[RMDB]
RNA sequence: GGGAACGACUCGAGUAGAGUCGAAAAAAGAUAUGGAUCUAUCGAAGCUGAUGACCCAUGGUAAAACCAUAUCGGAAACGAUAUGGGAGUACGCCAUGGCAAGGCUUCGUAAGGAUCCUAAGUCAAACUAGUUGACUCAGUUCGCUGAGUCAACUAGAAAAGAAACAACAACAACAAC
Reactivity to DMS in 0.01 (KOAc 150mM, MgCl2 10mM, bicine 150mM(pH8.5), 24C), signal-to-noise 1, nucleotides 027 to 126: a100a020g040a000u020a160u010g000g010a050u000c000u000a160u010c010g000a020a030g020c000u000g000a010u010g000a070c300c010c000a020u000g000g040u000a020a030a240a140c000c000a020u000a010u000c000g000g000a020a020a000c000g000a000u000a000u000g000g000g010a040g000u000a070c300g020c030c000a030u000g010g000c020a010a020g010g000c010u000u000c000g000u010a050a250g000g000a010u000c000c000u000a000a080g010u000c000a090a090a200
Annotation: Structure probing data (DMS) for a 177-nucleotide construct. DMS (dimethyl sulfate) methylates the pairing face of unpaired adenines and cytosines. The reactions ran in a buffer of 150 mM KOAc, 10 mM MgCl2 and 150 mM bicine (pH 8.5), at 24 C. For DMS the reverse transcriptase was MarathonRT. The data come from the RNA Mapping Database (RMDB), library TTRDES. For DMS, 1,090 sequencing reads were counted.